[RMDB]
Conditions: 150 mM KOAc, 10 mM MgCl2 and 150 mM bicine (pH 8.5), 24 C.
Chemical mapping of a 207-nucleotide RNA with 2A3 and DMS.
2A3 adducts were read by reverse transcription with SuperScript II with manganese.
It was measured as part of the RMDB library M2RFPK.
RNA sequence: GGGAACGACUCGAGUAGAGUCGAAAAAUACACCAGCAGUAGGACUCAGCGACUGUCACAACAAGGUUGUGCUGGUAUCCGACGGUCGUAUAGCCCUGUCUUGCAGGUUGCCUUGCACUGACGUGCCACACCAUUUACAGAUUCGUCUGUAAAUGAAUCCAUGUAUGAGGUUCGCCUCAUACAUGGAAAAAGAAACAACAACAACAAC
Reactivity to 2A3 in 0.01 (KOAc 150mM, MgCl2 10mM, bicine 150mM(pH8.5), 24C), signal-to-noise 5, nucleotides 027 to 156: a000u120a020c050a020c010c000a000g000c010a020g020u100a010g030g020a030c010u010c060a030g010c000g000a000c000u020g000u010c020a040c040a180a130c070a200a180g040g040u050u030g010u040g050c020u040g020g040u040a070u040c030c030g010a000c010g000g000u000c000g000u050a050u080a060g010c000c010c000u010g030u060c050u100u110g020c020a020g020g040u100u140g040c020c020u030u060g000c020a040c060u130g070a050c080g030u060g040c020c020a100c010a050c030c010a000u000u000u000a000c000a000g020a010u010u150c160g090u030c080u000g000u000a000a000a010u000g010a000a040
Reactivity to DMS in 0.01 (KOAc 150mM, MgCl2 10mM, bicine 150mM(pH8.5), 24C), signal-to-noise 3, nucleotides 027 to 156: a100u000a090c070a170c020c010a080g010c020a030g050u000a030g020g000a060c010u000c080a190g020c020g000a050c000u010g020u000c000a200c110a120a110c140a130a100g020g010u000u000g010u000g020c020u000g010g020u000a050u000c040c030g020a050c020g010g000u000c010g040u000a190u000a020g010c000c010c010u000g010u000c040u000u000g010c040a090g010g000u010u000g030c040c130u000u000g030c020a030c060u000g000a110c130g010u000g010c000c060a070c050a100c110c010a030u000u010u000a010c000a020g000a060u000u010c300g010u000c000u000g000u010a010a000a010u000g010a090a100